[RMDB]
RNA sequence: GGGAACGACUCGAGUAGAGUCGAAAAGGGAAUGGUGGUUUACCCCGUAAUCAAAUGAUUACCGACCAAUAAUUGGCGAAACUCGUUUCGCGUUGGCUGCCUAAUUCAAGGAAUUAGCGUGCCUUCAAAGACAUCAAGAAGUUCGCUUCUUGAUGAAGAUGACCAUAAUCUUCGGAUUAUGGUCAUCAAAAGAAACAACAACAACAAC
Reactivity to 2A3 in 0.01 (KOAc 150mM, MgCl2 10mM, bicine 150mM(pH8.5), 24C), signal-to-noise 4, nucleotides 027 to 156: g000g000g010a040a100u080g030g030u060g020g040u130u100u230a170c010c000c000c030g000u030a000a020u020c090a130a170a290u300g000a030u010u010a010c010c010g050a080c030c050a030a010u220a150a060u130u130g050g000c000g020a040a040a060c090u080c160g090u020u020u010c010g000c020g010u010u040g010g000c050u070g000c020c020u000a000a000u020u010c100a200a100g160g030a050a030u010u010a000g030c030g030u050g000c010c000u000u040c020a090a080a020g080a050c000a000u000c000a000a000g000a000a000g030u040u150c190g010c160u000u000c000u010u000g000a000u000g010a010a020
Reactivity to DMS in 0.01 (KOAc 150mM, MgCl2 10mM, bicine 150mM(pH8.5), 24C), signal-to-noise 2, nucleotides 027 to 156: g010g000g000a090a050u000g020g000u000g000g000u010u000u000a220c010c000c000c000g010u020a010a040u000c030a100a190a150u000g020a050u000u000a040c020c010g030a080c000c050a100a100u000a100a190u010u000g010g020c040g000a090a100a080c030u000c110g020u010u000u000c020g020c090g050u010u000g010g000c020u000g000c120c000u000a000a040u020u020c020a120a190g040g000a040a040u000u000a000g000c040g020u010g020c000c000u000u020c040a120a130a180g000a230c000a000u040c000a010a070g000a060a010g020u000u010c260g000c040u000u000c000u000u010g040a020u000g010a050a060